[RMDB]
RNA sequence: GGGAACGACUCGAGUAGAGUCGAAAAGAUAUGGAAUGGUUUGGUCGAUAAGUCCUCAUGACAGGUUAGAUCGGAAACGAUCUAACCUGUCAUGAGGGACUUUUGACGACUGAUCAUUCCUAAGUCAGUAUGUCAUGAAGUUCGCUUCAUGACAUACAAAAGAAACAACAACAACAAC
Reactivity to DMS in 0.01 (KOAc 150mM, MgCl2 10mM, bicine 150mM(pH8.5), 24C), signal-to-noise 1, nucleotides 027 to 126: g010a060u000a300u020g000g000a020a000u010g010g000u000u000u020g050g000u000c000g030a140u000a010a020g030u000c020c000u010c010a010u010g010a050c000a030g030g000u010u000a000g000a050u000c000g010g010a100a090a240c010g020a020u000c000u010a000a020c020c000u010g020u000c000a000u000g010a060g010g010g020a000c000u000u000u000u010g000a190c180g010a010c010u000g000a030u000c000a010u000u000c000c000u010a010a090g000u000c060a200
The record gives the reactivity of an RNA of 177 nucleotides to DMS.
It was measured as part of the RMDB library TTRINS.
For DMS the reverse transcriptase was MarathonRT.